[RMDB]
RNA sequence: GGGAACGACUCGAGUAGAGUCGAAAAGCAACAUAGAUCGUUCUAUUAACGAACACGCGCGGAUCGUCGGUGGUCGGCGAGCCCACGGACGUACUUGAUCGCGCGAACGAGUAAAAUUCGCCGGCAACCUUGUAAGUUUGUUCGCAAACUUACAAGGAAAAGAAACAACAACAACAAC
Reactivity to DMS in 0.01 (KOAc 150mM, MgCl2 10mM, bicine 150mM(pH8.5), 24C), signal-to-noise 4, nucleotides 027 to 126: g000c060a040a070c080a070u000a070g020a090u000c060g010u000u000c050u010a200u020u010a080a090c120g000a110a030c140a180c070g010c000g000c020g010g000a050u000c000g020u010c010g010g060u010g010g010u000c030g010g000c020g020a040g010c300c000c010a020c020g000g000a010c020g010u000a050c200u000u010g020a090u000c020g020c010g010c000g010a010a010c060g000a080g000u010a050a060a070a100u000u000c000g030c000c020g020g020c170a080a140
Reactivity to 2A3 in 0.01 (KOAc 150mM, MgCl2 10mM, bicine 150mM(pH8.5), 24C), signal-to-noise 5, nucleotides 027 to 126: g030c010a000a080c010a080u150a080g110a120u070c020g040u040u000c050u070a230u260u200a120a080c100g020a030a030c070a020c080g010c000g000c010g050g040a090u070c010g010u000c050g160g010u000g010g020u050c040g000g010c010g000a040g050c010c000c000a000c000g090g000a010c010g010u070a040c040u090u210g080a130u300c010g000c000g000c000g020a010a010c020g020a010g030u090a000a020a050a140u060u010c020g000c030c000g000g060c000a020a040